[RMDB]
RNA sequence: GGGAACGACUCGAGUAGAGUCGAAAAGUAUAGAAGCAUGAGACCGCAUGCGCUAUACGAUGAAUCACGGUCGAAUCCGUUGUGCGAAAGCACUUCGGUAAUGCAUAUCGGUAGGCAGAUCGGCCCGGAUCAGCUACCGUAAUUAGUACGGGCAAGAGAUACGAUCAUCAUUCGUGAUGAUCGUAUCAAAAGAAACAACAACAACAAC
Reactivity to 2A3 in 0.01 (KOAc 150mM, MgCl2 10mM, bicine 150mM(pH8.5), 24C), signal-to-noise 4, nucleotides 027 to 156: g020u020a010u000a020g060a220a040g000c000a000u010g000a000g010a140c020c010g020c030a000u030g000c010g030c000u000a000u010a010c050g030a030u160g170a060a090u160c090a030c060g000g020u020c020g040a020a070u050c000c010g000u000u000g000u000g000c010g040a110a040a010g000c000a000c000u000u000c000g000g000u040a070a040u120g020c050a030u080a080u250c010g000g030u010a010g160g170c070a040g000a000u000c000g030g000c030c010c000g020g000a000u000c010a020g000c000u000a000c000c000g010u010a010a030u070u100a030g150u050a040c030g000g010g000c030a030a000g070a000
Reactivity to DMS in 0.01 (KOAc 150mM, MgCl2 10mM, bicine 150mM(pH8.5), 24C), signal-to-noise 1, nucleotides 027 to 156: g050u000a020u000a020g000a110a080g000c010a030u000g000a220g010a210c030c030g030c000a020u000g010c010g030c000u010a010u000a030c010g000a110u000g020a120a120u000c110a080c010g000g040u010c020g010a240a140u010c010c000g010u000u020g000u000g000c000g000a080a140a300g020c010a000c000u010u000c040g070g010u040a020a120u000g020c050a110u000a110u000c020g000g020u000a030g000g020c040a070g030a050u000c010g020g020c000c010c000g020g020a140u000c040a130g000c030u010a050c000c030g010u000a010a050u000u010a080g040u030a050c000g020g040g000c050a130a070g000a300
An RNA of 207 nucleotides, treated with 2A3 and DMS and read out base by base. It was measured as part of the RMDB library OK3TST. The RNA was probed in 150 mM KOAc, 10 mM MgCl2 and 150 mM bicine (pH 8.5) at 24 C.